[RMDB]
RNA sequence: GGGAACGACUCGAGUAGAGUCGAAAAAAGUCACAGGAAUAAUGUUUUAAAGCCUGCCACCUUAGCUGGAUACACAUUAAUUGAACUUUGCUUUUGGGAAUGGGCAUACCAGGACAGAUUGGUCAGAAAAUUAGAACACAGGUCCAAAUUUACCAUCGACUUUCGACUAUUUCGAUAGUCGAAAGUCAAAAGAAACAACAACAACAAC
Reactivity to 2A3 in 0.01 (KOAc 150mM, MgCl2 10mM, bicine 150mM(pH8.5), 24C), signal-to-noise 1, nucleotides 027 to 156: a000a000g040u080c110a010c030a030g040g020a030a080u120a120a020u060g040u050u060u100u130a070a060a050g030c000c000u040g040c020c000a020c010c000u040u050a000g010c030u070g000g010a120u260a120c030a000c010a000u180u200a070a120u140u130g040a120a030c030u040u180u300g080c030u230u060u100u000g000g010g170a080a120u180g070g010g030c010a000u010a090c040c040a010g000g000a000c010a010g060a040u170u120g000g000u010c000a000g070a040a300a160a070u030u160a030g000a100a010c090a000c000a070g030g000u100c050c000a020a000a000u110u120u150a070c190c020a000u300c090